[RMDB]
RNA sequence: GGGAACGACUCGAGUAGAGUCGAAAAUGUCAAAAGGUAUAGUAAUAUUAAAAAGCGUUGAUGAUGUUAUCGUGAUAACCAACCAACGGGUGAUAAGGAUACCCAUAGUAGCAUUACAAACGAUACUUACAAACAAAAACAUGUUAUCGGUGAUAGGCUUAUACCCGCAGUUCGCUGCGGGUAUAAGAAAAGAAACAACAACAACAAC
Reactivity to DMS in 0.01 (KOAc 150mM, MgCl2 10mM, bicine 150mM(pH8.5), 24C), signal-to-noise 1, nucleotides 027 to 156: u000g060u000c070a090a030a120a120g000g020u000a060u000a090g000u020a040a100u010a180u000u010a090a040a110a080a180g030c080g000u000u000g020a160u000g020a110u010g030u010u000a030u010c110g040u070g010a070u000a070a080c020c070a080a090c060c050a050a060c000g020g010g020u000g040a170u040a110a110g070g000a110u000a010c060c030c000a090u000a100g020u000a020g010c010a070u000u000a230c060a080a080a170c070g010a070u000a030c090u020u000a140c010a050a060a070c070a010a070a080a090a110c040a090u010g000u000u010a020u000c010g000g010u010g040a070u000a070g000g010
Reactivity to 2A3 in 0.01 (KOAc 150mM, MgCl2 10mM, bicine 150mM(pH8.5), 24C), signal-to-noise 2, nucleotides 027 to 156: u080g010u000c020a000a020a020a080g040g000u060a060u040a140g020u010a110a160u010a090u300u160a050a060a040a060a000g040c020g000u050u050g060a100u000g000a040u070g050u110u030a010u030c100g000u020g030a010u010a080a040c000c040a050a010c010c000a010a100c080g010g000g000u020g050a120u060a200a060g000g000a030u070a090c000c000c000a010u010a030g090u000a010g030c020a010u090u090a030c060a020a060a000c020g020a030u010a040c000u080u080a020c120a100a190a020c050a020a150a050a020a000c030a010u050g010u010u010a040u050c020g010g000u070g070a070u090a080g020g010
Chemical mapping of a 207-nucleotide RNA with DMS and 2A3. For 2A3 the reverse transcriptase was SuperScript II with manganese. Conditions: 150 mM KOAc, 10 mM MgCl2 and 150 mM bicine (pH 8.5), 24 C. For DMS, 1,304 sequencing reads were counted. For 2A3, 1,001 sequencing reads were counted.